Annotation:
The record gives the reactivity of an RNA of 207 nucleotides to DMS and 2A3. Source: RMDB library OK3TST, as collected in RNAgym. The reactions ran in a buffer of 150 mM KOAc, 10 mM MgCl2 and 150 mM bicine (pH 8.5), at 24 C. DMS adducts were read by reverse transcription with MarathonRT. For 2A3, 4,071 sequencing reads were counted.

RNA sequence: GGGAACGACUCGAGUAGAGUCGAAAAUUUAAUAGCAUUCCAUCCAAGGUGGACUUCCUGGAGUUGGAUAUAACCAGAGAACAAUUCAUAUGUAUCCUACACUGAAGAACCCCAUUAACUUUCAGAAACCUAAAACUAGUGGUACUGGAAGUACGUAGUGCUAUUAAUCAUUCGUGAUUAAUAGCACAAAAGAAACAACAACAACAAC
Reactivity to DMS in 0.01 (KOAc 150mM, MgCl2 10mM, bicine 150mM(pH8.5), 24C), signal-to-noise 3, nucleotides 027 to 156: u010u000u000a070a160u010a200g050c040a140u000u000c020c020a110u000c080c050a180a120g050g070u000g010g020a300c100u000u000c010c030u000g020g060a190g040u000u000g000g000a130u000a080u000a110a160c070c050a120g010a130g000a050a090c060a070a130u000u010c040a120u000a040u000g000u000a070u000c020c010u000a080c020a130c020u010g000a030a060g020a110a120c020c010c010c000a070u020u000a050a040c020u000u000u000c000a020g000a140a100a280c010c010u000a030a030a080a080c160u000a070g020u020g000g020u000a300c000u000g000g010a010a010g000u000a050c110g010u010a130
Reactivity to 2A3 in 0.01 (KOAc 150mM, MgCl2 10mM, bicine 150mM(pH8.5), 24C), signal-to-noise 5, nucleotides 027 to 156: u130u110u070a140a130u110a060g030c030a050u070u080c000c010a030u030c080c050a090a090g020g040u090g000g050a080c040u040u040c040c050u020g040g000a170g040u040u050g020g010a010u010a000u010a070a090c070c040a030g050a010g040a160a030c060a060a100u190u080c020a050u150a030u170g020u020a020u020c000c000u010a010c010a020c030u030g020a050a020g020a080a090c020c020c000c000a010u090u070a040a010c000u000u000u010c000a020g030a110a140a070c000c010u050a130a090a040a190c050u080a080g100u020g110g000u010a020c000u000g000g000a010a000g000u010a020c050g060u090a020